The record gives the reactivity of an RNA of 177 nucleotides to DMS and 2A3. Conditions: 150 mM KOAc, 10 mM MgCl2 and 150 mM bicine (pH 8.5), 24 C. The data come from the RNA Mapping Database (RMDB), libraries RFM100 and RFMREP.
RNA sequence: GGGAACGACUCGAGUAGAGUCGAAAAUCUUCAGUUUUCAUCACGUUUAACUAGUAAUAGUGACCUUUGAAUAACUCUGUGUUUUCAUUAAAUCGUAGUGUUCAUUUACUUUGUCACUAAUUUCGCAGACCCGAGUAUACUUCGGUAUACUCGGGUCAAAAGAAACAACAACAACAAC
Reactivity to DMS in 0.01 (KOAc 150mM, MgCl2 10mM, bicine 150mM(pH8.5), 24C), signal-to-noise 1, nucleotides 027 to 126: u000c010u030u040c050a100g000u010u000u000u030c050a180u000c080a080c120g000u030u020u000a040a040c140u000a120g010u090a030a150u000a000g000u000g000a070c010c300u000u000u000g010a000a010u030a050a030c000u000c020u000g000u040g000u000u000u000u030c130a150u000u020a000a030a050u020c020g000u000a000g020u000g000u000u020c170a010u000u010u000a000c170u010u000u000g050u010c000a020c000u010a050a130u000u000u000c080g020c300a120
Reactivity to 2A3 in 0.01 (KOAc 150mM, MgCl2 10mM, bicine 150mM(pH8.5), 24C), signal-to-noise 1, nucleotides 027 to 126: u050c010u090u200c070a050g000u020u040u020u070c050a080u170c010a090c050g000u000u040u180a090a000c000u030a000g040u050a060a030u000a140g000u000g000a000c000c000u050u050u010g000a000a000u000a080a000c000u000c120u090g060u010g030u150u040u090u000c140a170u170u300a210a120a020u010c090g030u010a000g000u000g000u000u000c040a000u000u000u100a190c050u050u070u070g000u040c000a000c000u000a000a180u020u170u220c040g000c060a010